Chemical mapping of a 177-nucleotide RNA with 2A3 and DMS. For 2A3 the reverse transcriptase was SuperScript II with manganese.
RNA sequence: GGGAACGACUCGAGUAGAGUCGAAAAUAGAGCUAGGACAGUUAUUGUAUGAGGUCUACCCAAUGCUAGAUGCAGAGGCGCAUAAUAGAUCGAUAUGAACAUCAUGAGCUGUCCCGUAAUAAAACCAACGACGAACAACAUUCGUGUUGUUCGUCGUAAAAGAAACAACAACAACAAC
Reactivity to 2A3 in 0.01 (KOAc 150mM, MgCl2 10mM, bicine 150mM(pH8.5), 24C), signal-to-noise 3, nucleotides 027 to 126: u130a020g160a040g090c150u070a040g000g000a010c000a060g060u000u100a090u050u200g060u190a020u000g110a040g020g000u000c000u020a030c010c010c000a000a000u010g000c000u030a110g000a300u300g110c030a030g020a010g040g000c160g000c160a050u100a290a000u000a120g010a000u010c110g070a080u130a100u300g030a010a030c040a030u030c010a000u120g090a000g010c000u000g000u000c000c010c010g010u030a040a030u070a110a070a010a000c020c020a010
Reactivity to DMS in 0.01 (KOAc 150mM, MgCl2 10mM, bicine 150mM(pH8.5), 24C), signal-to-noise 2, nucleotides 027 to 126: u020a020g000a150g030c230u020a100g020g020a000c000a000g000u000u000a000u000u000g020u060a000u000g050a260g000g050u000c030u000a030c190c000c020a010a130u010g050c040u000a110g000a000u170g000c080a000g000a300g000g000c300g000c300a070u040a030a300u000a090g070a060u000c000g000a300u000a140u000g000a160a160c010a130u000c090a100u030g000a060g000c000u000g000u000c000c000c300g060u000a190a020u030a000a000a030a030c110c040a070

For DMS the reverse transcriptase was MarathonRT. Reactivities are given for positions 27 through 126. The RNA was probed in 150 mM KOAc, 10 mM MgCl2 and 150 mM bicine (pH 8.5) at 24 C. The 2A3 profile rests on 1,167 reads.